[RMDB]
RNA sequence: GGGAACGACUCGAGUAGAGUCGAAAAGGUAGCCCAUCUGACGAAUACGGCCUUCAGCUGCGUAUUGCAGCGUCGAUACGUGGUCAACCGUCACGGGGGCAGCAGUCAGGUACAGGUGCAACUCGCCAGUUUUACACGCGUUCGCGCGUGUAAAACUAAAAGAAACAACAACAACAAC
Reactivity to DMS in 0.01 (KOAc 150mM, MgCl2 10mM, bicine 150mM(pH8.5), 24C), signal-to-noise 2, nucleotides 027 to 126: g000g030u000a090g020c010c040c010a080u000c030u010g010a020c000g000a130a130u020a130c230g000g010c040c000u000u010c040a230g040c000u000g000c000g020u010a070u000u000g000c000a130g050c060g010u000c060g000a100u010a030c050g000u010g020g020u000c090a080a130c160c100g000u000c090a020c150g020g000g040g010g030c020a170g020c100a090g000u000c020a030g010g000u010a050c100a070g000g020u000g010c090a050a050c030u000c050g000c090c030
Reactivity to 2A3 in 0.01 (KOAc 150mM, MgCl2 10mM, bicine 150mM(pH8.5), 24C), signal-to-noise 2, nucleotides 027 to 126: g140g000u090a010g050c010c020c000a090u090c020u050g020a010c020g050a090a000u120a200c130g000g000c000c050u060u100c090a030g050c020u000g040c050g060u150a160u100u230g020c100a180g050c050g040u060c040g000a090u100a120c090g030u080g010g010u060c060a050a050c080c040g080u130c010a010c110g030g040g030g080g000c020a000g060c000a010g030u000c020a000g030g080u040a080c050a060g040g010u100g070c030a020a020c000u030c070g140c010c000

This 177-nucleotide RNA was probed chemically with DMS and 2A3. For DMS, 1,317 sequencing reads were counted. 2A3 adducts were read by reverse transcription with SuperScript II with manganese. Source: RMDB library OK2TRN, as collected in RNAgym. For 2A3, 1,033 sequencing reads were counted. DMS (dimethyl sulfate) methylates the pairing face of unpaired adenines and cytosines.